[RMDB]
RNA sequence: GGGAACGACUCGAGUAGAGUCGAAAACGACGCGCCGGCCUCCAGAAGCUUCUGGUAGCUGGUUUGCGCGUCGGCAAUGGCGUCAUGCCACAGACGGUUCAGCUCUUCGCGGACAUGGUAGGUCGGGGUCUAAAUGAAUGUUCGCAUUCAUUUAGACAAAAGAAACAACAACAACAAC
Reactivity to 2A3 in 0.01 (KOAc 150mM, MgCl2 10mM, bicine 150mM(pH8.5), 24C), signal-to-noise 8, nucleotides 027 to 126: c010g010a000c000g000c000g000c010c020g010g000c010c010u010c000c010a020g010a140a100g210c110u170u040c010u070g030g000u030a020g030c050u050g070g000u050u050u130g000c010g000c000g000u000c000g000g000c040a050a150u090g030g000c010g040u180c070a060u190g010c020c000a040c000a020g080a010c020g070g010u090u120c040a040g010c020u010c030u120u100c080g010c020g040g010a030c020a070u090g020g050u090a050g000g060u050c040g010g010g030
Reactivity to DMS in 0.01 (KOAc 150mM, MgCl2 10mM, bicine 150mM(pH8.5), 24C), signal-to-noise 9, nucleotides 027 to 126: c020g010a010c000g020c010g020c000c010g010g000c010c010u010c000c000a010g010a050a300g010c280u010u000c010u000g000g010u000a090g010c020u000g020g040u000u010u010g020c010g020c000g020u000c010g010g000c160a080a110u000g010g010c010g010u000c110a090u010g010c010c010a050c140a070g000a090c070g010g000u000u000c080a100g010c030u000c060u000u000c120g020c040g000g000a070c080a060u000g010g010u000a060g010g000u000c030g000g000g010
Source: RMDB library OK2TST, as collected in RNAgym. This 177-nucleotide RNA was probed chemically with 2A3 and DMS. Values cover nucleotides 27 to 126.